Source: RMDB library PDB130, as collected in RNAgym. Chemical mapping of a 207-nucleotide RNA with 2A3. The reactions ran in a buffer of 150 mM KOAc, 10 mM MgCl2 and 150 mM bicine (pH 8.5), at 24 C. Values cover nucleotides 27 to 156. For 2A3, 597 sequencing reads were counted. 2A3 adducts were read by reverse transcription with SuperScript II with manganese.
RNA sequence: GGGAACGACUCGAGUAGAGUCGAAAAUCUGAAUGAUCAGACGAUAAAUCAGCGCCGCGCUCACGAAGGCUCCGUUACUAAUAACUUAGCAACGGUUGAUCUCUCAGCGGCAAGCGAUUCUAUAUCUCUUGCCCUCUGUGAGCUCUUAUUGCCCCCACCCGGUAGUAAACUUCGGUUUACUACCGGGAAAAGAAACAACAACAACAAC
Reactivity to 2A3 in 0.01 (KOAc 150mM, MgCl2 10mM, bicine 150mM(pH8.5), 24C), signal-to-noise 2, nucleotides 027 to 156: u020c010u010g010a090a070u260g020a170u100c010a030g040a060c030g010a030u110a130a180a040u110c070a020g060c010g050c210c050g010c020g000c000u030c050a030c110g100a080a010g000g020c000u010c010c000g000u000u000a000c000u000a030a050u190a230a110c070u090u020a010g000c000a000a000c010g000g070u030u050g110a210u020c030u000c000u020c010a030g010c060g070g040c000a000a000g000c000g000a000u090u050c090u070a170u050a040u250c000u000c010u010u020g000c020c000c000u050c060u040g000u020g030a020g010c000u010c000u070u150a170u060u130g020c010c000c010c000c000a010